[RMDB]
RNA sequence: GGGAACGACUCGAGUAGAGUCGAAAAGGAGAACUCACCUCCAGAGGACCCCUUCAGCGAACAGAGGAGUCUCUACCUCGGAGGAGAAAGACCGUAGCGAUGGGGGAGAUGCUAGGAGUAGGCGGCGUACGGUGGGGAUUCGUCCCCACCAAAAGAAACAACAACAACAAC
Reactivity to DMS in 0.01 (KOAc 150mM, MgCl2 10mM, bicine 150mM(pH8.5), 24C), signal-to-noise 6, nucleotides 027 to 129: g050g000a050g020a080a070c070u020c070a120c000c000u040c030c040a140g010a080g010g030a150c080c030c010c020u040u030c060a130g030c000g000a100a080c080a130g020a050g000g000a090g050u020c040u000c120u030a120c070c030u020c090g020g020a090g000g000a070g000a030a120a130g030a100c010c030g030u050a100g010c180g020a050u030g020g020g040g040g010a050g020a050u090g000c090u040a060g050g010a060g010u050a040g000g000c000g000g000c080g020u050a060c050
Reactivity to 2A3 in 0.01 (KOAc 150mM, MgCl2 10mM, bicine 150mM(pH8.5), 24C), signal-to-noise 7, nucleotides 027 to 129: g040g010a050g010a090a020c010u020c060a110c030c010u010c010c010a010g020a030g040g010a090c000c010c000c010u040u080c040a060g030c020g070a070a030c040a050g040a040g060g010a030g050u020c010u020c020u110a160c020c020u020c030g030g010a030g020g010a030g040a010a040a010g040a010c010c040g040u060a010g020c030g060a070u100g000g000g000g010g000a010g000a000u090g020c050u090a020g020g020a020g010u040a040g030g050c010g000g000c030g020u070a020c070